[RMDB]
Chemical mapping of a 207-nucleotide RNA with 2A3 and DMS. For 2A3 the reverse transcriptase was SuperScript II with manganese. The reactions ran in a buffer of 150 mM KOAc, 10 mM MgCl2 and 150 mM bicine (pH 8.5), at 24 C. For DMS, 19,972 sequencing reads were counted.

RNA sequence: GGGAACGACUCGAGUAGAGUCGAAAAAGAACACGAAAUCUUCAUCGAAUCGUACAUGUGUUUCGAGAUCGGUGCACAUAUGCACGAGUGUGUAAAAAAUUGAUUUUAGUACACGAUCUUUGCUUUCGUCCAAGAUCUUCGACGAAAGCAAAGAUCGAUUAGGGUAAAGAUUCGUCUUUACCCUAAUAAAAGAAACAACAACAACAAC
Reactivity to 2A3 in 0.01 (KOAc 150mM, MgCl2 10mM, bicine 150mM(pH8.5), 24C), signal-to-noise 9, nucleotides 027 to 156: a000g070a030a020c050a010c080g040a040a040a040u070c040u140u070c050a070u040c040g030a060a030u020c020g020u060a030c050a150u180g100u040g030u100u060u060c050g020a070g050a180u080c030g020g020u020g020c020a020c010a060u140a060u150g050c060a020c090g020a080g020u080g000u010g040u120a040a040a040a030a040a080u100u130g040a060u040u050u030u080a080g030u070a030c050a010c080g000a000u000c000u000u000u000g000c000u000u000u000c000g020u000c020c020a090a070g060a300u120c130u120u090c100g000a000c000g000a000a000a010g000c000a000a000a000g000a000u000c000g000
Reactivity to DMS in 0.01 (KOAc 150mM, MgCl2 10mM, bicine 150mM(pH8.5), 24C), signal-to-noise 5, nucleotides 027 to 156: a100g000a070a080c060a130c060g010a070a070a080u000c040u000u000c050a110u000c050g000a060a080u000c020g040u000a040c030a060u000g030u000g020u000u000u000c020g010a160g020a080u000c050g020g030u000g000c060a060c050a050u000a040u000g050c030a020c030g000a080g010u000g010u000g010u000a000a050a080a060a070a090u000u000g010a100u000u000u000u000a110g020u000a100c100a260c040g000a010u000c000u000u000u010g000c010u000u000u000c010g020u000c020c070a070a130g010a100u000c120u000u000c040g020a030c000g010a030a000a020g000c000a000a000a000g010a000u000c000g000